RNA sequence: GGGAACGACUCGAGUAGAGUCGAAAAUCAUACUUGAUAGUAGAUAUUGGGAGUCACGGUCUCUACUAUCGAGUAUGAGCACUACUUGUAGACUAGACUGUGAUUCCCAAUGUCUAUAAGUGGUGUAGUAUCAGGUUGUAUUCGUACAAUCUGAUACAAAAGAAACAACAACAACAAC
Reactivity to 2A3 in 0.01 (KOAc 150mM, MgCl2 10mM, bicine 150mM(pH8.5), 24C), signal-to-noise 9, nucleotides 027 to 126: u100c010a020u040a110c030u060u110g080a050u120a110g030u000a000g010a010u000a000u000u010g010g000g010a020g020u020c000a000c000g000g000u000c000u010c010u050a180c000u000a020u170c040g000a000g000u000a010u060g010a020g020c040a030c060u010a000c000u010u010g000u000a000g030a100c090u010a010g010a010c010u030g010u020g030a030u010u010c000c000c000a000a010u010g000u000c000u000a000u000a010a000g010u010g030g030u050g020u050a060
Reactivity to DMS in 0.01 (KOAc 150mM, MgCl2 10mM, bicine 150mM(pH8.5), 24C), signal-to-noise 9, nucleotides 027 to 126: u030c040a080u020a030c050u000u000g010a140u030a140g030u000a010g000a010u010a000u000u000g000g000g000a030g010u000c020a010c000g000g000u000c010u000c140u020a110c010u000a020u040c060g020a000g010u000a000u020g000a100g010c140a090c170u000a010c000u000u000g010u000a000g000a220c210u010a040g010a030c010u000g020u000g000a020u000u000c000c000c000a010a010u000g010u000c000u000a000u000a020a040g010u000g000g020u010g010u010a120

Structure probing data (2A3 and DMS) for a 177-nucleotide construct. 2A3 adducts were read by reverse transcription with SuperScript II with manganese. The data come from the RNA Mapping Database (RMDB), library OK1LIB.